[RMDB]
RNA sequence: GGGAACGACUCGAGUAGAGUCGAAAAGUGAUAGCUCCGGAGGCAAGUCGUCUUCUUCCUUUGCUCGGGGUGCUCUUGCCUGGUGCAGGCAGCGGAACCCCAACCCUUCCUGCGCCGCGGCGGAAACAGGGGCUCGGACCAGCCUCCCGAAGGAGCACUCAUUACGAGUCUUCGGACUCGUAAUGAGAAAAGAAACAACAACAACAAC
Reactivity to 2A3 in 0.01 (KOAc 150mM, MgCl2 10mM, bicine 150mM(pH8.5), 24C), signal-to-noise 2, nucleotides 027 to 156: g110u100g060a150u100a110g010c010u000c000c010g000g040a010g000g000c050a070a060g040u090c050g030u000c030u150u010c030u090u170c050c030u110u110u190g100c070u060c100g050g000g010g040u050g020c020u020c010u140u300g020c020c020u010g000g000u010g010c000a000g010g000c020a010g010c150g080g000a110a110c020c000c030c000a020a050c000c000c000u000u000c000c000u000g010c000g020c000c020g000c090g020g030c010g040g030a090a060a060c060a030g070g000g000g010c060u030c030g070g020a020c000c030a040g010c010c000u000c000c000c000g090a110a040g000g000a000g000c000a020
An RNA of 207 nucleotides, treated with 2A3 and read out base by base.
The RNA was probed in 150 mM KOAc, 10 mM MgCl2 and 150 mM bicine (pH 8.5) at 24 C.